The record gives the reactivity of an RNA of 177 nucleotides to DMS and 2A3. The 2A3 profile rests on 1,746 reads. The DMS profile rests on 1,128 reads. Values cover nucleotides 27 to 126. Conditions: 150 mM KOAc, 10 mM MgCl2 and 150 mM bicine (pH 8.5), 24 C.
RNA sequence: GGGAACGACUCGAGUAGAGUCGAAAAGAUAUGGAGAGGCACUAAAGGCAACAGCCGAUAUCGGAAACGAUAUCGGACAUGCCUGGUGGCCUCUCCUAAGUCAAAGUUCCCCUCUUCGGAGGGGAACGCGUAGUGACCUCUUCGGAGGUCACUACGCAAAAGAAACAACAACAACAAC
Reactivity to DMS in 0.01 (KOAc 150mM, MgCl2 10mM, bicine 150mM(pH8.5), 24C), signal-to-noise 2, nucleotides 027 to 126: g020a080u000a300u000g020g010a010g000a010g010g000c010a090c010u000a120a070a040g000g010c010a010a160c220a210g030c040c000g000a020u020a020u000c000g000g020a170a090a220c000g010a020u000a000u000c030g000g020a010c070a080u020g020c010c010u000g000g020u000g040g000c000c000u000c060u000c000c000u000a010a050g000u000c060a070a170a270g010u000u000c020c000c000c000u000c000u020u010c290g040g010a010g020g010g000g000a000a000c000
Reactivity to 2A3 in 0.01 (KOAc 150mM, MgCl2 10mM, bicine 150mM(pH8.5), 24C), signal-to-noise 1, nucleotides 027 to 126: g010a000u090a040u140g000g000a000g030a020g050g030c020a030c230u240a300a240a120g040g000c030a180a060c070a300g030c010c000g000a000u000a020u020c010g050g000a070a000a000c000g000a000u090a010u000c000g000g000a010c010a080u100g000c000c000u000g000g000u080g010g030c020c020u000c040u000c000c000u000a000a010g000u000c020a140a040a000g000u000u010c080c030c090c000u010c000u030u160c270g200g000a010g000g080g000g000a000a000c000